Description
This 177-nucleotide RNA was probed chemically with 2A3 and DMS. It was measured as part of the RMDB library OK2TRN. For 2A3 the reverse transcriptase was SuperScript II with manganese. For DMS, 817 sequencing reads were counted. Reactivities are rounded to 0.1 and cut off at 0 and 3.
RNA sequence: GGGAACGACUCGAGUAGAGUCGAAAAGGUUUCGAUGUCGUAGCCCUCGGGCAGAUUUUUGAUCGCGGUACGGCGCAGCAGCCAUUUCACGAACACCGGUGUCUUGCGGGACAAGAACCAGAACACCCCCUUCGAUAAGGUUCGCCUUAUCGAAGGGAAAAGAAACAACAACAACAAC
Reactivity to 2A3 in 0.01 (KOAc 150mM, MgCl2 10mM, bicine 150mM(pH8.5), 24C), signal-to-noise 1, nucleotides 027 to 126: g010g030u020u030u090c030g030a080u070g010u030c020g010u050a110g010c010c030c000u000c040g060g020g000c000a000g020a160u120u230u060u130u240g070a070u060c000g000c020g060g040u000a010c030g040g000c010g000c030a050g000c000a010g000c000c030a030u080u050u080c030a040c120g020a140a020c080a030c060c070g000g040u070g090u010c020u010u140g000c050g040g020g070a030c040a000a030g030a060a030c020c000a020g080a110a030c020a070c060c040
Reactivity to DMS in 0.01 (KOAc 150mM, MgCl2 10mM, bicine 150mM(pH8.5), 24C), signal-to-noise 1, nucleotides 027 to 126: g000g000u020u000u010c060g000a110u020g000u020c000g000u010a100g040c010c000c010u000c250g000g010g000c040a050g040a040u000u000u000u020u030g000a050u000c080g020c290g000g000u000a030c010g000g050c010g010c070a070g010c100a080g040c050c020a090u000u000u000c070a100c080g000a080a050c020a110c140c030g000g010u000g000u000c020u000u000g020c040g000g000g000a220c090a030a050g020a050a040c020c050a110g000a070a110c100a030c150c030